Structure probing data (2A3 and DMS) for a 177-nucleotide construct. For DMS, 47,557 sequencing reads were counted. It was measured as part of the RMDB library OK1LIB.

[RMDB]
RNA sequence: GGGAACGACUCGAGUAGAGUCGAAAAUAGCUACUAGGUUGGCAUCUUGAGCGCAUCUUACUCAAGUCCUAGCAUCUCCAUUAAUAUCUAAUGAUAUUAAUGUUGCCUCUUAGUAGCAGAGAUGCAAGCUAGAUCUAUCGUUCGCGAUAGAUUUAGCAAAAGAAACAACAACAACAAC
Reactivity to 2A3 in 0.01 (KOAc 150mM, MgCl2 10mM, bicine 150mM(pH8.5), 24C), signal-to-noise 9, nucleotides 027 to 126: u100a010g010c000u000a000c000u010a010g070g060u170u110g090g010c040a070u050c020u010u010g010a010g010c100g010c130a140u050c050u120u150a070c010u010c010a010a010g030u050c020c030u040a030g020c010a060u050c020u010c040c000a000u000u000a000a000u000a000u010c070u140a240a140u300g000a000u000a000u000u000a000a000u010g020u030u050g020c000c000u030c010u030u040a010g000u010a000g000c020a000g010a000g000a000u060g020c050a070a060
Reactivity to DMS in 0.01 (KOAc 150mM, MgCl2 10mM, bicine 150mM(pH8.5), 24C), signal-to-noise 9, nucleotides 027 to 126: u030a070g010c010u000a010c000u000a010g000g010u030u000g010g010c090a080u030c020u000u000g000a020g030c230g010c090a060u020c070u010u020a220c010u000c010a000a010g000u010c050c040u010a130g000c030a100u020c020u010c040c000a010u000u000a000a000u000a000u000c000u040a130a190u050g010a000u000a000u000u000a010a000u000g000u000u010g010c300c010u000c060u000u000a020g010u010a000g020c010a140g000a030g000a020u000g010c040a140a140